This 177-nucleotide RNA was probed chemically with DMS and 2A3. The RNA was probed in 150 mM KOAc, 10 mM MgCl2 and 150 mM bicine (pH 8.5) at 24 C. 2A3 adducts were read by reverse transcription with SuperScript II with manganese.

[RMDB]
RNA sequence: GGGAACGACUCGAGUAGAGUCGAAAACCGGACGUCGUUUUGGUGUCUGAUUCGGUAACCGAAUCGGGAGCACCAUCUGCGUAGGCUUGUGGUUUAAGGCUUGCGCCACCUACGGUCUUGGAUAGCCGAUCUAUGAUGCAUUCGUGCAUCAUAGAUCAAAAGAAACAACAACAACAAC
Reactivity to DMS in 0.01 (KOAc 150mM, MgCl2 10mM, bicine 150mM(pH8.5), 24C), signal-to-noise 5, nucleotides 027 to 126: c000c000g000g000a020c120g010u000c030g010u000u000u010u000g020g030u000g010u010c000u010g000a010u000u000c000g000g010u030a170a130c110c010g010a000a000u000c000g020g010g020a130g030c010a010c000c010a020u010c090u010g010c030g020u000a020g000g000c020u000u010g030u000g000g020u010u010u020a090a060g000g000c010u000u020g010c160g000c000c100a020c040c020u000a050c040g000g000u000c030u000u020g010g000a100u010a090g020c070c100
Reactivity to 2A3 in 0.01 (KOAc 150mM, MgCl2 10mM, bicine 150mM(pH8.5), 24C), signal-to-noise 9, nucleotides 027 to 126: c000c000g000g010a030c040g020u070c030g000u020u010u070u110g010g000u010g040u020c010u010g000a000u000u000c010g020g100u240a220a280c150c000g000a010a000u000c000g000g010g010a160g040c010a000c000c000a010u010c020u050g000c000g010u010a020g000g020c020u090u150g060u130g080g170u080u090u160a060a030g020g000c010u020u040g010c040g010c010c010a030c010c000u070a040c050g040g030u030c000u080u170g080g020a110u080a070g040c040c040
About this RNA:
It was measured as part of the RMDB libraries RFM100 and RFMREP.